[RMDB]
RNA sequence: GGGAACGACUCGAGUAGAGUCGAAAAGGAGCUCGGGAUGCUCUAAAUCCUAGGAAGAGCAUCCGUACGCUCUUCCUUACCACCAGAGCGUAUUGAAGUGUUGGUGGUAUUGAGACACUUCAGUGAGGGCUCAAGAGGACAUUGCUCUUACCGAGCACGAGACCUCUAUGUUCGCAUAGAGGUUUCGAAAAGAAACAACAACAACAAC
Reactivity to 2A3 in 0.01 (KOAc 150mM, MgCl2 10mM, bicine 150mM(pH8.5), 24C), signal-to-noise 1, nucleotides 027 to 156: g030g000a000g000c040u040c080g050g000g020a000u020g000c000u030c010u020a020a020a070u230c020c030u030a040g090g050a030a020g000a000g010c000a040u000c060c050g040u030a020c030g020c000u000c020u020u000c000c000u010u030a030c000c000a050c010c010a000g010a000g000c050g050u120a080u070u150g050a110a030g030u020g050u070u060g020g090u100g040g040u020a030u050u110g010a000g010a020c030a020c070u010u040c050a090g020u050g110a100g000g030g030c010u000c030a040a020g070a010g070g030a020c060a130u080u120g000c000u000c000u030u090a130c060c060g000a000g000c040a030